[RMDB]
RNA sequence: GGGAACGACUCGAGUAGAGUCGAAAAUCUAACUCAUUCGUGAGUUAGAGUGAGCGCAGCGACCAUUGGGCCGGUGGCGCGCUGUCGGUCCCGCGCGUGGCGAUAGUGCUUGCUUCGGCAAGCACAACAUUGUCGUACCCUUCGGGGUACGACAAUGAAAAGAAACAACAACAACAAC
Reactivity to 2A3 in 0.01 (KOAc 150mM, MgCl2 10mM, bicine 150mM(pH8.5), 24C), signal-to-noise 1, nucleotides 027 to 126: u000c010u000a000a000c000u000c000a020u050u030c140g160u040g000a000g020u000u000a000g000a020g030u050g100a070g050c060g010c030a080g020c000g030a060c000c020a060u060u070g080g160g000c070c000g000g020u020g030g040c130g000c010g020c030u030g000u040c030g010g020u030c000c020c010g020c020g020c010g110u110g010g090c040g020a060u170a170g030u020g030c010u000u000g020c000u000u020c070g050g000c010a000a000g000c000a000c010a010a000
Reactivity to DMS in 0.01 (KOAc 150mM, MgCl2 10mM, bicine 150mM(pH8.5), 24C), signal-to-noise 2, nucleotides 027 to 126: u000c000u000a000a010c000u000c000a030u000u000c140g010u000g000a020g020u000u000a010g000a030g000u000g000a150g020c010g000c000a100g020c000g010a130c000c020a160u000u010g010g020g000c100c050g010g020u010g020g040c020g010c080g000c000u000g020u000c030g020g010u000c010c020c040g030c150g000c090g020u000g000g010c040g010a140u010a100g000u000g020c000u000u010g020c000u000u010c170g010g010c020a010a000g000c000a000c010a050a130